[RMDB]
RNA sequence: GGGAACGACUCGAGUAGAGUCGAAAAGAUAUGGACUACCCACCUCCCGAAGGAGGCAGCUCGGAAACGAGCUGAACUACCUCUCAAGGGAGAGGUCCUAAGUCAAAGCCAGAGUUCGCUCUGGCAAGCCAUUAAUCUUGUUCGCAAGAUUAAUGGCAAAAGAAACAACAACAACAAC
Reactivity to DMS in 0.01 (KOAc 150mM, MgCl2 10mM, bicine 150mM(pH8.5), 24C), signal-to-noise 4, nucleotides 027 to 126: g010a100u000a160u000g000g010a010c000u000a140c000c000c030a300c130c000u000c000c000c050g010a300a260g000g010a020g000g000c000a010g010c000u000c000g010g000a070a070a130c020g010a020g010c020u000g000a030a040c050u020a260c010c000u000c000u020c050a090a300g000g010g010a010g000a040g010g000u000c010c010u000a040a120g010u000c060a100a110a160g000c000c000a000g000a010g020u000u010c240g010c000u000c000u000g000g000c010a020a030
Reactivity to 2A3 in 0.01 (KOAc 150mM, MgCl2 10mM, bicine 150mM(pH8.5), 24C), signal-to-noise 2, nucleotides 027 to 126: g020a010u090a090u180g000g000a000c010u150a180c030c000c020a040c010c000u020c030c010c010g090a110a030g010g010a010g000g070c010a000g000c000u000c000g040g050a070a080a070c000g000a000g010c000u000g010a000a020c020u070a040c000c000u020c000u000c010a030a030g000g000g020a000g010a000g010g010u000c010c000u040a250a070g100u130c080a120a030a020g000c010c020a010g010a000g030u050u200c200g050c140u000c000u000g000g090c010a020a010
Structure probing data (DMS and 2A3) for a 177-nucleotide construct. The RNA was probed in 150 mM KOAc, 10 mM MgCl2 and 150 mM bicine (pH 8.5) at 24 C. 2A3 adducts were read by reverse transcription with SuperScript II with manganese.